About this RNA
Structure probing data (2A3 and DMS) for a 207-nucleotide construct. The RNA was probed in 150 mM KOAc, 10 mM MgCl2 and 150 mM bicine (pH 8.5) at 24 C. Values cover nucleotides 27 to 156. For DMS the reverse transcriptase was MarathonRT. For 2A3 the reverse transcriptase was SuperScript II with manganese. The 2A3 profile rests on 3,109 reads.
RNA sequence: GGGAACGACUCGAGUAGAGUCGAAAAGCAGUAUCUCGUUAGGCGAGGCUCCUAUACAAACACAGGUUGCUGAUCUGACGACGUCGAGAGACGCCCAAGAUUAGGACAGGAUAUAUCGAACCCAGGUGAACCUGUCCAGGGUUCGCCCUGGACAGAACUUUAUACCUUACUUCGGUAAGGUAUAAAGAAAAGAAACAACAACAACAAC
Reactivity to 2A3 in 0.01 (KOAc 150mM, MgCl2 10mM, bicine 150mM(pH8.5), 24C), signal-to-noise 3, nucleotides 027 to 156: g030c040a030g020u090a130u060c020u000c030g050u090u200a110g100g000c040g040a060g000g000c010u030c010c010u140a140u090a210c120a030a170a010c080a010c030a110g120g040u120u170g080c010u020g000a040u000c020u050g000a010c020g000a010c010g010u000c010g010a010g010a000g000a130c000g010c020c010c010a020a020g020a060u040u070a010g020g020a010c030a040g000g070a020u070a020u020a040u200c090g010a050a040c020c000c010a010g020g070u050g020a030a060c010c000u000g010u000c010c000a000g030g000g000u030u050c080g030c040c000c000u000g000g010a000c010a000g000a000a000
Reactivity to DMS in 0.01 (KOAc 150mM, MgCl2 10mM, bicine 150mM(pH8.5), 24C), signal-to-noise 3, nucleotides 027 to 156: g030c060a090g000u000a060u010c010u000c040g050u000u010a110g000g020c010g010a120g010g010c030u000c010c020u010a140u000a120c100a060a080a110c100a150c070a160g000g030u000u000g030c010u010g000a020u000c020u000g000a220c000g000a010c010g030u020c020g020a300g010a300g010a020c020g010c000c000c070a200a110g020a050u000u000a040g010g010a090c070a080g000g020a110u000a040u000a080u010c040g010a040a190c020c010c000a250g010g010u010g010a060a100c060c000u000g010u010c010c040a030g000g030g000u010u000c200g020c030c010c000u000g000g000a030c000a000g020a020a070